The record gives the reactivity of an RNA of 207 nucleotides to DMS and 2A3. Conditions: 150 mM KOAc, 10 mM MgCl2 and 150 mM bicine (pH 8.5), 24 C. DMS adducts were read by reverse transcription with MarathonRT. Values cover nucleotides 27 to 156. It was measured as part of the RMDB library OK3TST.
RNA sequence: GGGAACGACUCGAGUAGAGUCGAAAAAAUUAGUGCGUACAGCCUGGGAGAAUGCGCAGAUAUCAGGUAAUUUCGGGGGCAUUCGUGCAUUGAUGUCUAAUGGGUUGGCCUCGAGAAAACAAGGUGAUUUUGACGGAGCCAUCACGGUUAAAACCGCCACAGUGCGUUAAUUCGUUAACGCACUGUGAAAAGAAACAACAACAACAAC
Reactivity to DMS in 0.01 (KOAc 150mM, MgCl2 10mM, bicine 150mM(pH8.5), 24C), signal-to-noise 2, nucleotides 027 to 156: a060a080u000u000a090g010u000g040c060g040u010a120c080a140g010c050c000u000g020g020g000a120g000a100a080u010g020c020g030c040a110g000a060u000a080u000c030a100g010g050u000a060a190u000u010u010c050g000g030g030g030g000c030a090u000u000c080g000u000g030c040a120u000u000g000a090u030g000u000c080u000a110a090u010g000g000g000u010u000g000g000c010c000u010c010g010a150g000a100a070a030a130c090a060a080g030g020u000g000a080u000u000u000u000g000a220c040g010g000a140g080c030c020a040u000c030a050c030g000g020u000u010a030a020a080a090c040c020g030c070
Reactivity to 2A3 in 0.01 (KOAc 150mM, MgCl2 10mM, bicine 150mM(pH8.5), 24C), signal-to-noise 3, nucleotides 027 to 156: a000a040u250u170a050g030u050g090c040g000u050a070c050a060g010c000c020u020g000g020g030a090g030a100a030u100g010c050g000c020a020g020a030u060a030u100c060a030g030g060u090a130a160u070u100u130c040g020g010g010g010g030c020a010u040u070c070g050u060g040c020a020u010u150g020a060u060g030u080c010u080a100a070u070g000g010g040u050u050g000g060c000c020u020c060g030a050g020a050a090a020a020c040a010a050g000g020u050g050a060u010u050u030u040g010a010c050g010g020a020g000c000c000a020u050c050a020c030g000g020u040u010a030a050a020a030c000c020g050c040